[RMDB]
RNA sequence: GGGAACGACUCGAGUAGAGUCGAAAAUUCUUCCUGUGUCAUUUUGCCCUGAAAAUCAAGGCCAAUUUUUUCCUUUCUUCAUCCAAAAGCCUUCAGAAAGCUCCCUCUGCACCUCUCUGGAGGGUCAUUAUAGGCAGUUAUUCGUAACUGCCUAUAAAAAAGAAACAACAACAACAAC
Reactivity to DMS in 0.01 (KOAc 150mM, MgCl2 10mM, bicine 150mM(pH8.5), 24C), signal-to-noise 5, nucleotides 027 to 126: u030u030c070u010u010c000c010u010g020u010g030u020c040a090u010u010u010u010g000c040c000c030u010g000a080a080a090a090u020c090a070a100g000g000c030c070a040a000u000u010u010u010u010u010c030c020u000u000u000c030u010u000c050a070u010c030c050a040a090a090a120g000c010c010u000u000c060a090g010a080a080a100g000c050u010c020c000c010u000c050u010g010c040a070c060c010u010c040u000c060u000g010g000a040g000g000g010u010c080a070
Reactivity to 2A3 in 0.01 (KOAc 150mM, MgCl2 10mM, bicine 150mM(pH8.5), 24C), signal-to-noise 6, nucleotides 027 to 126: u050u010c020u030u040c010c000u040g020u030g040u060c060a080u030u090u080u130g040c000c000c000u050g070a100a070a020a110u140c060a050a040g050g000c020c010a070a070u020u010u000u020u040u120c040c010u060u080u070c010u060u060c030a110u040c030c010a060a060a040a080g030c010c000u040u040c000a030g070a060a060a000g000c010u030c020c000c000u030c000u040g020c010a050c020c010u030c010u020c030u010g030g030a020g010g000g020u030c010a010
Description
The record gives the reactivity of an RNA of 177 nucleotides to DMS and 2A3. It was measured as part of the RMDB libraries RFM100 and RFMREP. The RNA was probed in 150 mM KOAc, 10 mM MgCl2 and 150 mM bicine (pH 8.5) at 24 C. 2A3 adducts were read by reverse transcription with SuperScript II with manganese.